[RMDB]
RNA sequence: GGGAACGACUCGAGUAGAGUCGAAAAGAUAUGGAGCACUCGAUUCGAACUACUACUACCACUCGGAAACGAGUGAUGUAGCGACAGGAUUGUGCUCCUAAGUCAAAUCCUUACUUCGGUAAGGAAAGUGAAAUACAAUGUUCGCAUUGUAUUUCACAAAAGAAACAACAACAACAAC
Reactivity to 2A3 in 0.01 (KOAc 150mM, MgCl2 10mM, bicine 150mM(pH8.5), 24C), signal-to-noise 7, nucleotides 027 to 126: g010a000u030a010u070g000g000a000g000c010a010c030u120c120g090a040u030u020c020g080a180a080c140u300a070c020u020a010c000u020a050c250c030a000c010u000c000g000g000a020a040a020c000g000a010g010u010g000a020u090g000u010a030g030c050g200a090c080a100g030g010a030u040u050g000u010g000c010u000c000c010u000a020a000g010u000c010a020a030a200u010c000c000u010u000a010c010u030u060c230g110g000u020a010a010g010g020a070a040a010
Reactivity to DMS in 0.01 (KOAc 150mM, MgCl2 10mM, bicine 150mM(pH8.5), 24C), signal-to-noise 7, nucleotides 027 to 126: g010a030u000a300u010g000g000a010g010c000a000c020u010c140g010a060u000u000c000g010a140a130c180u010a100c030u000a030c010u000a100c090c000a010c000u010c000g020g000a060a070a100c000g010a010g010u000g000a020u010g010u000a000g010c190g010a120c230a250g010g010a030u010u000g010u000g000c000u010c000c000u000a010a060g010u000c020a110a100a120u000c000c000u010u000a000c000u000u010c200g010g000u000a000a010g000g000a000a020a090